[RMDB]
RNA sequence: GGGAACGACUCGAGUAGAGUCGAAAAGGAGCGACAAGUAUUUAGCUUGAGAUAGCUAAAUCACCUCGGUAUAAUUAGGGUGAGACCUAGGAACCGUAGGGGUAUUCUCAAAGGAAGCUUUUGCAGUGAAGGAAGAUACGAUUCGUCGUAUCUUCAAUACUAAUUUCCAGUUCGCUGGAAAUUAGUAAAAAGAAACAACAACAACAAC
Reactivity to DMS in 0.01 (KOAc 150mM, MgCl2 10mM, bicine 150mM(pH8.5), 24C), signal-to-noise 4, nucleotides 027 to 156: g010g000a050g020c040g010a060c020a010a050g000u000a030u010u000u000a010g000c010u000u010g010a270g010a160u000a040g000c000u010a010a020a020u000c020a050c000c000u010c010g040g020u000a080u000a030a110u000u000a050g020g020g020u000g010a300g000a180c010c010u000a050g010g010a120a050c010c000g020u010a140g000g030g000g030u010a040u000u010c010u010c050a080a080a110g000g010a070a200g010c020u000u000u010u000g000c060a100g010u010g010a100a140g030g000a020a020g000a020u000a020c010g000a080u000u010c300g030u010c010g020u000a000u000c000u000u000c000a020a100
Reactivity to 2A3 in 0.01 (KOAc 150mM, MgCl2 10mM, bicine 150mM(pH8.5), 24C), signal-to-noise 5, nucleotides 027 to 156: g080g010a040g030c030g080a070c030a040a020g050u060a080u010u010u010a000g000c000u010u030g020a020g010a080u150a020g000c000u000a000a000a010u010c010a010c000c000u020c020g000g020u190a170u020a300a070u050u030a010g000g050g010u050g140a100g050a070c000c000u010a010g020g000a050a000c020c000g010u030a020g000g000g000g030u030a070u130u080c070u010c040a050a060a010g090g010a070a030g020c020u060u080u120u190g050c090a070g020u050g140a080a020g080g000a000a010g000a000u000a000c010g000a020u020u080c170g050u000c000g000u070a000u010c000u000u000c000a000a000